[RMDB]
RNA sequence: GGGAACGACUCGAGUAGAGUCGAAAAAGAAAGCACGGUCUCACCGGCGCGAAGGCGCGAAGACAACGACAUUGACAUGCGUAUUUCCUUCACUUCACAAGUUCAGGGCGGAAACACUGUGUGCCCAAUGAAAAUCGAGGUUCGCCUCGAUUUUCAUAAAAGAAACAACAACAACAAC
Reactivity to DMS in 0.01 (KOAc 150mM, MgCl2 10mM, bicine 150mM(pH8.5), 24C), signal-to-noise 1, nucleotides 027 to 126: a150g010a140a100a170g060c000a090c070g010g010u000c020u010c150a040c030c040g010g000c010g020c060g000a120a210g010g030c040g020c040g000a000a050g070a060c150a020a060c010g010a060c000a090u000u030g010a050c250a010u000g000c030g010u000a110u000u000u030c010c030u000u010c030a060c060u010u000c100a020c080a090a100g000u010u000c110a090g010g000g010c090g010g000a120a130a090c200a010c100u000g020u000g000u000g000c000c010c010a100

Description: An RNA of 177 nucleotides, treated with DMS and read out base by base. The RNA was probed in 150 mM KOAc, 10 mM MgCl2 and 150 mM bicine (pH 8.5) at 24 C.